[RMDB]
RNA sequence: GGGAACGACUCGAGUAGAGUCGAAAAGGCUGCGUAUCACUCUAGGGCACGUGAUAGUGCGAUAUAAGAAGCACUGGUACAUGCCGGCAGGGACAGUUAAGAGAUGGCCGCAGUCUCGUGUCCCUGCAAAAGGAGUUCUCGUUCGCGAGAACUCCAAUCUGCGGAAUUAGUUCGCUAAUUCCGCAGAAAAAGAAACAACAACAACAAC
Reactivity to 2A3 in 0.01 (KOAc 150mM, MgCl2 10mM, bicine 150mM(pH8.5), 24C), signal-to-noise 1, nucleotides 027 to 156: g020g000c000u010g020c020g090u110a060u130c040a020c050u070c080u180a090g050g000g030c020a000c060g020u030g080a080u000a010g000u010g020c040g000a000u020a040u080a220a170g150a110a010g020c010a010c000u010g000g020u020a020c010a040u070g010c020c090g060g000c010a020g000g040g000a010c010a090g030u150u230a160a010g010a000g010a040u040g020g070c060c030g000c020a000g000u010c010u010c000g000u010g000u000c000c020c000u010g010c010a040a040a000a000g000g000a000g000u010u000c000u000c000g010u010u090c200g000c010g040a000g020a000a000c000u000c000c000a000a000